[RMDB]
RNA sequence: GGGAACGACUCGAGUAGAGUCGAAAAUAAAAGACCAGGAGCAACAUUGGAGAUGAUGCAGAAAGUGGCAUCUGUCUUUGCUACUCACAUCCAUACAGCAAUGAACAAAGGAGAACAGUUUUCAUAGCCCAUGCCAAGAUUGUCAGACAAGAAAAAAGACUAAAAUCCAUUUCGAUGGAUUUUAGUCAAAAGAAACAACAACAACAAC
Reactivity to DMS in 0.01 (KOAc 150mM, MgCl2 10mM, bicine 150mM(pH8.5), 24C), signal-to-noise 2, nucleotides 027 to 156: u040a010a050a060a040g000a190c000c020a090g030g020a070g050c020a050a060c020a150u000u020g000g000a150g040a070u000g010a050u010g000c000a120g040a030a080a110g100u010g030g010c050a060u000c060u020g000u010c060u000u000u000g030c030u000a050c040u010c030a130c050a090u020c000c080a150u000a110c110a140g000c050a060a060u000g010a060a140c070a020a060a050g010g000a140g030a090a080c020a050g010u010u000u000u020c080a110u010a070g000c020c020c010a090u000g010c060c020a070a130g020a130u000u010g010u000c030a060g010a020c080a040a130g030a010a070a080a080a150a220
Reactivity to 2A3 in 0.01 (KOAc 150mM, MgCl2 10mM, bicine 150mM(pH8.5), 24C), signal-to-noise 4, nucleotides 027 to 156: u080a000a080a010a000g080a040c020c030a060g050g030a040g040c020a030a060c020a060u060u120g030g000a060g010a020u070g010a020u050g040c030a030g130a120a140a020g150u100g040g000c000a030u010c060u030g090u010c030u060u060u060g000c000u030a030c010u030c030a050c010a040u060c090c000a040u050a150c020a020g040c020a020a130u070g010a070a020c050a060a050a040g070g020a030g020a050a010c030a020g010u030u010u050u070c060a050u090a030g000c000c000c030a020u050g000c020c000a050a030g070a110u070u060g020u060c020a010g040a070c060a020a030g150a050a030a100a160a010a040